Chemical mapping of a 207-nucleotide RNA with 2A3 and DMS. It was measured as part of the RMDB library RNAMAK. The 2A3 profile rests on 24,062 reads.

RNA sequence: GGGAACGACUCGAGUAGAGUCGAAAAGGGGUCACCCACAAGAUGAGGCCAUGCAAGUACUAUAAUCACCUGAAGCCUCCACGGGUGGUAGUAUGAUGACCAUGGCUUGAGUGGGUGACGGAGGCACCCAAAAACACCAAUGUUCGCAUUGGUGUAACAUUUCUUACUAGUUCGCUAGUAAGAAAUGAAAAGAAACAACAACAACAAC
Reactivity to 2A3 in 0.01 (KOAc 150mM, MgCl2 10mM, bicine 150mM(pH8.5), 24C), signal-to-noise 9, nucleotides 027 to 156: g060g010g040g010u010c010a010c000c090c010a010c020a020a120g190a230u300g100a100g080g000c000c000a000u010g000c030a130a100g010u010a000c020u030a030u100a300a190u190c000a000c000c000u010g040a080a010g010c000c000u000c000c000a020c000g010g000g000u000g010g010u000a000g000u000a010u070g160a250u040g010a040c010c000a000u000g000g000c000u050u070g050a030g020u000g000g000g000u000g000a000c000g000g000a000g000g000c010a040c000c010c000a070a100a010a010a000c000a000c000c000a000a000u010g020u080u120c280g010c140a000u000u000g000g000u000g000u000a010a000
Reactivity to DMS in 0.01 (KOAc 150mM, MgCl2 10mM, bicine 150mM(pH8.5), 24C), signal-to-noise 4, nucleotides 027 to 156: g010g010g030g010u000c010a030c000c000c010a070c040a130a160g030a180u000g020a100g010g010c010c010a030u000g010c030a040a100g030u000a030c010u000a060u000a130a150u000c020a010c010c000u000g000a070a110g030c000c000u000c000c010a300c000g040g020g050u000g000g010u000a010g010u000a020u000g030a160u000g000a130c300c010a030u000g000g010c000u010u000g000a200g020u000g010g000g020u000g000a000c010g030g010a030g100g030c030a080c020c000c010a040a050a080a150a070c010a010c000c010a010a010u010g010u000u000c300g020c020a010u000u010g000g040u000g030u000a020a150